[RMDB]
RNA sequence: GGGAACGACUCGAGUAGAGUCGAAAAGAUAUGGACUCCGACGAUAAGAAAUGGGUCGGAAACGACCCAUUUCUUUUGACGUCGUGUCCUAAGUCAAAACCCCCAUCUGGUUCGCCAGAUGGGGGAACCCAAGAUUACUGUUCGCAGUAAUCUUGGGAAAAGAAACAACAACAACAAC
Reactivity to DMS in 0.01 (KOAc 150mM, MgCl2 10mM, bicine 150mM(pH8.5), 24C), signal-to-noise 1, nucleotides 027 to 126: g000a050u000a300u010g000g000a020c000u000c300c000g010a010c000g020a110u000a000a010g010a010a010a000u000g000g000g030u010c010g000g000a030a040a100c020g000a020c010c000c000a000u000u000u000c000u000u030u000u000g000a170c060g000u000c000g000u000g000u010c000c000u010a060a100g000u020c030a100a090a170a120c000c000c010c000c000a020u000c000u000g000g000u010u000c210g010c010c010a000g000a010u010g000g000g000g000g000a000a000

Conditions: 150 mM KOAc, 10 mM MgCl2 and 150 mM bicine (pH 8.5), 24 C. Structure probing data (DMS) for a 177-nucleotide construct. Reactivities are given for positions 27 through 126. DMS adducts were read by reverse transcription with MarathonRT.